Structure probing data (2A3 and DMS) for a 177-nucleotide construct. For 2A3 the reverse transcriptase was SuperScript II with manganese. It was measured as part of the RMDB library OK1LIB. Conditions: 150 mM KOAc, 10 mM MgCl2 and 150 mM bicine (pH 8.5), 24 C.
RNA sequence: GGGAACGACUCGAGUAGAGUCGAAAACAAGGUCGGGACUUCAGACUCGACAUUUUGAUCGUCUUGGAGUGGCACUUCCUUAAUUGGAGCAAGCAUAACAACAAGUGCAAGCGCUAAUUUAUUAUGAAAAUAAUGGCAUAUUCGUAUGCCAUUAUUUAAAAGAAACAACAACAACAAC
Reactivity to 2A3 in 0.01 (KOAc 150mM, MgCl2 10mM, bicine 150mM(pH8.5), 24C), signal-to-noise 6, nucleotides 027 to 126: c040a020a020g080g000u030c000g020g030g080a050c030u100u080c100a050g050a090c000u030c060g050a010c040a060u090u120u070u200g210a180u040c030g030u010c040u070u090g050g020a030g010u070g040g020c040a060c070u040u030c010c000u050u120a040a030u060u050g030g010a010g000c000a070a000g000c000a020u080a140a100c120a070a030c020a300a100g000u000g020c010a030a090g010c010g000c020u010a010a050u070u100u000a140u180u120a250u140g070a040
Reactivity to DMS in 0.01 (KOAc 150mM, MgCl2 10mM, bicine 150mM(pH8.5), 24C), signal-to-noise 7, nucleotides 027 to 126: c130a080a030g010g020u000c010g000g000g000a050c040u030u020c160a080g000a080c010u000c050g010a030c050a070u010u010u030u020g010a120u020c070g000u010c020u000u000g010g020a070g000u010g000g020c050a110c080u010u000c010c020u000u010a030a030u000u010g010g000a070g010c030a070a300g000c000a030u000a080a090c200a080a150c300a080a110g020u010g010c010a070a280g010c010g020c020u010a020a020u010u010u020a070u040u020a110u040g000a100